[RMDB]
RNA sequence: GGGAACGACUCGAGUAGAGUCGAAAAAGAGCGAACCAUUAAGAUUGGCACCUGUAUCGUUGAGACCAGGAGUACGGUUCGCACCAUUGCCAAGGAAUUUGGAGUCUCCAAAAGUACGGUGCACAAAACCCUACUAGCGCUUCGGCGCUAGUAGGGUAAAAGAAACAACAACAACAAC
Reactivity to 2A3 in 0.01 (KOAc 150mM, MgCl2 10mM, bicine 150mM(pH8.5), 24C), signal-to-noise 2, nucleotides 027 to 126: a000g130a000g000c000g000a000a000c000c000a050u120u140a110a000g120a230u210u220g020g000c000a060c000c000u020g090u000a080u210c020g000u090u250g130a030g080a000c000c000a000g060g150a050g120u050a070c050g040g000u000u060c000g000c040a000c010c000a100u000u200g000c000c080a000a030g300g180a230a120u000u000u120g050g030a000g000u000c000u010c020c010a260a000a000a000g000u000a030c020g010g000u000g000c000a040c000a260a030a020